[RMDB]
Structure probing data (DMS and 2A3) for a 207-nucleotide construct. Reactivities are given for positions 27 through 156. The DMS profile rests on 1,929 reads. It was measured as part of the RMDB library OK3TST. 2A3 adducts were read by reverse transcription with SuperScript II with manganese.
RNA sequence: GGGAACGACUCGAGUAGAGUCGAAAAUGAAUGCAAAGGAAAAGUUCAUGAAGGAAAUGAAAAGUGCUACUCCAGUGAACACACAAAUGAUAAGAAGGCAAAACAGCCUUAUUGCUGAUAUGGAGGAGAAAGUUUGAGUGUCCUGGCUAGAAGAUCCUACCGAGAAGGAUUUCGAUCCUUCUCGGUAAAAAGAAACAACAACAACAAC
Reactivity to DMS in 0.01 (KOAc 150mM, MgCl2 10mM, bicine 150mM(pH8.5), 24C), signal-to-noise 1, nucleotides 027 to 156: u010g000a070a000u000g020c040a000a080a100g050g010a060a010a030a130g030u000u020c040a060u010g000a080a060g030g000a040a060a070u010g010a040a090a050a120g010u000g020c030u000a090c030u000c030c020a060g040u000g030a050a090c090a070c050a110c130a020a050a150u020g010a130u000a110a190g000a050a090g020g000c010a020a030a090a080c140a150g010c020c070u000u000a000u000u000g050c030u010g000a090u000a060u000g040g000a100g030g010a070g020a050a100a070g000u010u010u000g020a020g030u010g000u000c000c020u000g030g010c060u010a070g000a030a050g000a120u000c050c040
Reactivity to 2A3 in 0.01 (KOAc 150mM, MgCl2 10mM, bicine 150mM(pH8.5), 24C), signal-to-noise 2, nucleotides 027 to 156: u100g040a060a000u070g000c040a010a070a100g000g060a180a090a010a000g030u090u100c030a030u080g040a140a000g080g000a080a100a050u050g030a050a010a040a010g020u090g010c010u050a060c030u010c000c000a010g030u000g120a080a000c010a000c000a000c020a060a050a060u070g030a020u020a130a100g060a010a010g030g000c040a060a110a150a080c020a060g020c020c000u000u080a090u060u130g020c010u040g020a010u010a070u210g020g060a020g010g000a020g050a040a110a010g030u050u100u080g010a000g010u030g000u020c010c000u010g000g000c020u010a020g010a050a000g000a060u030c000c000